RNA sequence: GGGAACGACUCGAGUAGAGUCGAAAACGUGAGCGAACGCUGAAAAGCACCCCACGAAGGGAGGUGCAAUAGGGCGUGAAAUCAGUUGGCGAUCGAACGACGGGGCAUACAAGGUCCUCUACACAAUAUCCCAUCUGUCAUUCGUGACAGAUGGGAUAAAAGAAACAACAACAACAAC
Reactivity to 2A3 in 0.01 (KOAc 150mM, MgCl2 10mM, bicine 150mM(pH8.5), 24C), signal-to-noise 3, nucleotides 027 to 126: c020g110u070g040a020g040c040g030a040a030c020g020c000u070g030a050a030a030a020g020c000a000c000c000c000c000a050c120g270a070a130g040g000g000a180g040g010u020g020c000a010a080u180a120g000g070g000c040g030u030g050a000a050a050u080c010a070g000u050u060g060g010c090g030a090u060c030g060a090a040c010g040a030c070g000g000g000g000c020a040u100a160c070a140a030g170g000u040c010c000u010c020u050a030c020a000c000a070a060u030
Reactivity to DMS in 0.01 (KOAc 150mM, MgCl2 10mM, bicine 150mM(pH8.5), 24C), signal-to-noise 2, nucleotides 027 to 126: c050g010u000g000a070g020c000g010a120a020c000g050c010u000g000a130a090a120a140g000c000a000c020c010c000c000a110c300g000a080a130g000g030g000a030g000g060u000g000c000a010a040u000a040g000g000g000c030g000u010g000a120a150a050u000c100a020g010u020u010g000g030c000g020a060u000c040g020a120a040c060g040a050c130g000g000g000g020c060a090u020a130c210a070a120g000g010u000c030c020u000c070u000a010c100a060c140a000a120u000

Source: RMDB libraries RFM100 and RFMREP, as collected in RNAgym. This 177-nucleotide RNA was probed chemically with 2A3 and DMS. 2A3 adducts were read by reverse transcription with SuperScript II with manganese.